The data come from the RNA Mapping Database (RMDB), library 15KREP. This 177-nucleotide RNA was probed chemically with DMS and 2A3. Reactivities are given for positions 27 through 126.
RNA sequence: GGGAACGACUCGAGUAGAGUCGAAAAAGGUGCCCCAUUGACAAAUUGUGUUAAGAUGCUUACUCCUAAAACUGGUACAGGUAUAGCUAUAUCUGUUAAACCAGAGAGUACAGCUGAUCAAGAGACUAGAUAUACACAUCUUCGGAUGUGUAUAUCUAAAAGAAACAACAACAACAAC
Reactivity to DMS in 0.01 (KOAc 150mM, MgCl2 10mM, bicine 150mM(pH8.5), 24C), signal-to-noise 2, nucleotides 027 to 126: a140g030g000u020g010c130c000c000c110a160u000u000g000a050c170a080a100a130u000u000g020u000g040u000u000a090a120g000a130u010g010c010u020u000a010c000u000c000c290u010a030a050a140a270c010u010g000g030u000a030c000a010g010g030u000a000u000a220g010c190u020a060u010a010u010c000u000g000u000u000a010a070a030c010c000a010g000a140g000a010g010u000a000c200a000g050c030u000g000a090u010c080a120a080g000a100g000a080c120u000
Reactivity to 2A3 in 0.01 (KOAc 150mM, MgCl2 10mM, bicine 150mM(pH8.5), 24C), signal-to-noise 2, nucleotides 027 to 126: a000g120g000u100g000c000c030c030c030a070u020u150g020a010c050a040a140a070u300u100g100u000g010u050u080a100a030g000a050u040g010c000u000u000a000c010u040c000c020u160a150a150a140a140c000u020g010g020u000a010c000a000g020g000u000a020u020a030g130c110u100a020u000a000u020c030u000g040u030u110a150a020a000c000c000a000g020a010g000a000g050u000a010c050a040g040c010u030g040a050u010c090a100a040g050a020g020a140c040u010